Chemical mapping of a 207-nucleotide RNA with DMS and 2A3. The data come from the RNA Mapping Database (RMDB), library OK3TST. 2A3 adducts were read by reverse transcription with SuperScript II with manganese. Conditions: 150 mM KOAc, 10 mM MgCl2 and 150 mM bicine (pH 8.5), 24 C. The DMS profile rests on 3,576 reads. For 2A3, 1,374 sequencing reads were counted.
RNA sequence: GGGAACGACUCGAGUAGAGUCGAAAAUAGAACGUACAGCUGUUUGAUUACGUUUAACAGGAGAGUUCCACCAUAUUUUUCUGAGCAGGACACACUUAGAUUUUUAGAGAAUUAUUGGCGUGGCCUAAUGCUUUACCAGAGGGGUUGGCAUGGAGAAAUUAGCGUAAAUGUUCGCAUUUACGCUAAUAAAAGAAACAACAACAACAAC
Reactivity to DMS in 0.01 (KOAc 150mM, MgCl2 10mM, bicine 150mM(pH8.5), 24C), signal-to-noise 2, nucleotides 027 to 156: u000a160g000a020a040c000g040u000a080c130a130g000c050u000g010u030u000u000g020a180u000u000a020c030g000u000u020u000a060a130c080a090g020g010a120g000a130g000u000u000c020c000a130c040c020a040u000a040u000u010u000u010u000c030u030g030a100g090c080a100g000g000a080c070a020c020a000c010u000u000a120g000a060u020u000u010u000u020a150g020a210g000a070a100u000u000a090u010u000g030g010c050g040u020g030g000c000c020u000a060a090u020g000c030u000u000u010a070c060c020a070g040a120g020g010g040g050u000u010g030g020c050a100u010g000g000a090g010a090a090
Reactivity to 2A3 in 0.01 (KOAc 150mM, MgCl2 10mM, bicine 150mM(pH8.5), 24C), signal-to-noise 3, nucleotides 027 to 156: u150a020g050a030a010c000g000u060a010c020a060g060c060u180g100u210u110u090g140a100u100u080a020c020g000u030u030u050a110a070c070a040g050g040a040g010a010g050u070u000c020c040a060c000c030a060u020a110u160u140u040u040u060c020u050g020a030g030c030a020g020g040a010c000a010c030a000c040u020u050a020g000a060u050u070u010u070u170a130g060a000g040a130a060u140u090a080u140u170g020g020c040g010u020g010g040c000c000u010a070a030u080g010c010u060u110u120a080c000c020a010g010a040g050g030g010g020u050u010g030g000c020a040u080g030g030a060g040a040a190